This 177-nucleotide RNA was probed chemically with DMS and 2A3.
The reactions ran in a buffer of 150 mM KOAc, 10 mM MgCl2 and 150 mM bicine (pH 8.5), at 24 C.
The data come from the RNA Mapping Database (RMDB), library TTRDES.
RNA sequence: GGGAACGACUCGAGUAGAGUCGAAAAGAUAUGGAAAUUGUUGUAGACAUGCUCGAAGGGUCGGAAACGACCUCAAGAGCAACAGCUACACCAAUUUCCUAAGUCAAAAGGCAUGGUUCGCCAUGCCGGAUCAACAUUGGUUCGCCAAUGUUGAUCCAAAAGAAACAACAACAACAAC
Reactivity to DMS in 0.01 (KOAc 150mM, MgCl2 10mM, bicine 150mM(pH8.5), 24C), signal-to-noise 4, nucleotides 027 to 126: g020a060u000a300u010g010g010a010a000a020u000u000g010u000u000g000u000a010g010a060c070a260u000g020c000u000c010g000a290a240g000g000g000u010c000g000g000a110a070a230c010g010a020c010c010u010c010a020a300g000a020g010c020a010a020c300a170g010c010u010a010c000a010c050c000a040a010u000u010u000c000c000u000a010a050g000u010c020a100a050a120a220g030g000c000a000u000g010g010u000u000c300g020c000c000a000u000g000c000c000
Reactivity to 2A3 in 0.01 (KOAc 150mM, MgCl2 10mM, bicine 150mM(pH8.5), 24C), signal-to-noise 3, nucleotides 027 to 126: g020a020u070a040u150g000g010a010a020a010u000u010g020u000u000g000u000a010g020a120c080a180u110g020c000u020c020g110a180a060g040g010g010u000c010g010g020a060a060a030c010g000a000c000c010u010c020a020a010g000a000g030c010a010a010c020a000g030c010u000a000c000a000c000c000a000a000u000u020u000c000c000u000a100a020g070u010c030a040a060a080a160g010g000c010a000u010g000g070u060u160c300g050c070c010a000u000g000c020c000